[RMDB]
Chemical mapping of a 170-nucleotide RNA with DMS and 2A3.
The RNA was probed in 150 mM KOAc, 10 mM MgCl2 and 150 mM bicine (pH 8.5) at 24 C.
For 2A3 the reverse transcriptase was SuperScript II with manganese.
RNA sequence: GGGAACGACUCGAGUAGAGUCGAAAAUCCGUCGUUCCAUCCUUUUCUUACCUUGUGGCCGGCAUGGCCCCAGCCUCCUCGCUGGCGCCGGCUGGGCAACGAUCCGAGGGAACUAUUCCUCUCGAGACACCCCGGCAGUUCGCUGCCGGGAAAAGAAACAACAACAACAAC
Reactivity to DMS in 0.01 (KOAc 150mM, MgCl2 10mM, bicine 150mM(pH8.5), 24C), signal-to-noise 4, nucleotides 027 to 129: u060c010c030g090u040c020g010u000u020c000c000a110u100c220c010u020u050u000u000c020u060u000a120c140c090u030u070g050u020g040g010c040c090g010g000c080a070u040g000g010c020c060c000c010a020g000c000c130u070c130c020u050c160g020c040u030g000g020c300g020c060c020g010g030c020u000g040g050g000c000a200a000c170g020a120u040c030c020g000a050g300g000g010a060a230c240u180a090u020u020c070c000u020c070u000c040g060a220g020a060c160a150c110
Reactivity to 2A3 in 0.01 (KOAc 150mM, MgCl2 10mM, bicine 150mM(pH8.5), 24C), signal-to-noise 4, nucleotides 027 to 129: u020c000c000g000u020c020g000u000u000c020c000a250u160c100c040u140u190u180u040c050u060u090a140c050c030u040u130g040u080g080g000c050c020g000g000c060a130u090g010g000c030c070c000c000a000g000c000c040u160c020c000u030c120g030c010u010g010g050c010g000c010c000g030g030c020u020g000g000g000c000a040a020c040g130a100u000c020c000g000a000g010g000g040a020a040c100u050a150u130u060c000c000u100c000u020c000g100a150g030a080c010a090c010